Annotation
This 177-nucleotide RNA was probed chemically with DMS and 2A3. The RNA was probed in 150 mM KOAc, 10 mM MgCl2 and 150 mM bicine (pH 8.5) at 24 C. Reactivities are given for positions 27 through 126. Source: RMDB library OK2TRN, as collected in RNAgym.
[RMDB]
RNA sequence: GGGAACGACUCGAGUAGAGUCGAAAAAAAGAAGGUAAAACAAAGCACAUCGAACGUAUAUUGAUAAAUGAUGACCAUCCAUUUUCAACAUUUUAAAAUUACGUAAGUAAACAUUCGAAUUGGACCCCUUAUUAUCUUAUUUCGAUAAGAUAAUAAGAAAAGAAACAACAACAACAAC
Reactivity to DMS in 0.01 (KOAc 150mM, MgCl2 10mM, bicine 150mM(pH8.5), 24C), signal-to-noise 5, nucleotides 027 to 126: a040a060a140g000a080a070g000g010u010a050a070a070a100c080a070a090a130g020c100a100c100a080u010c030g010a160a030c040g020u000a020u010a040u000u000g000a130u020a010a010a010u000g010a070u000g020a080c300c110a070u000c070c080a080u010u000u000u000c020a020a050c030a030u000u000u000u010a050a110a040a060u000u000a020c000g010u000a040a120g010u010a040a040a060c070a040u000u000c040g020a020a050u000u000g000g010a170c020c010c020
Reactivity to 2A3 in 0.01 (KOAc 150mM, MgCl2 10mM, bicine 150mM(pH8.5), 24C), signal-to-noise 3, nucleotides 027 to 126: a000a000a000g130a040a010g050g010u140a090a080a040a020c050a080a150a030g060c060a060c010a100u060c050g040a060a020c010g040u020a070u010a000u190u060g030a040u100a180a040a030u050g020a030u050g000a010c020c010a040u070c040c030a080u160u060u030u050c010a020a030c000a050u010u050u050u110a060a130a020a040u040u000a000c000g000u020a030a040g040u040a070a140a040c020a020u040u080c030g020a080a030u050u010g020g030a040c010c000c000